The record gives the reactivity of an RNA of 177 nucleotides to DMS and 2A3. For DMS, 7,128 sequencing reads were counted. DMS adducts were read by reverse transcription with MarathonRT.
[RMDB]
RNA sequence: GGGAACGACUCGAGUAGAGUCGAAAAGAUAUGGAUCGAUUCGUAUACCCACCAACAGCAUCGAUCUAUAUCUCGGAAACGAGAUCAUAGGGAGCUGUAGUAGGGUAUACGAAUCGAUCCUAAGUCACAUGUACUAAACCUUCGGGUUUAGUACAUGAAAAGAAACAACAACAACAAC
Reactivity to DMS in 0.01 (KOAc 150mM, MgCl2 10mM, bicine 150mM(pH8.5), 24C), signal-to-noise 5, nucleotides 027 to 126: g010a030u010a300u020g000g010a010u000c000g000a010u000u000c000g010u000a000u000a010c000c010c010a110c110c100a110a030c000a010g000c000a300u000c160g000a030u020c000u000a010u000a040u010c010u000c010g010g000a080a080a220c000g000a010g000a000u000c270a010u000a010g000g000g010a030g020c010u000g030u010a140g010u000a120g030g000g000u000a000u000a010c000g010a010a000u000c010g010a000u000c000c000u000a000a040g000u000c030a280
Reactivity to 2A3 in 0.01 (KOAc 150mM, MgCl2 10mM, bicine 150mM(pH8.5), 24C), signal-to-noise 1, nucleotides 027 to 126: g030a040u090a020u260g000g000a000u020c020g000a000u020u000c010g000u000a000u000a040c030c020c000a010c060c100a170a060c000a000g010c000a240u300c100g070a010u040c030u010a010u000a000u000c000u000c000g000g070a060a070a060c010g000a030g000a000u060c060a000u120a020g050g030g030a040g020c030u020g000u030a010g040u040a100g000g000g000u000a000u010a010c010g000a000a000u000c000g010a000u000c000c010u000a000a000g030u010c000a000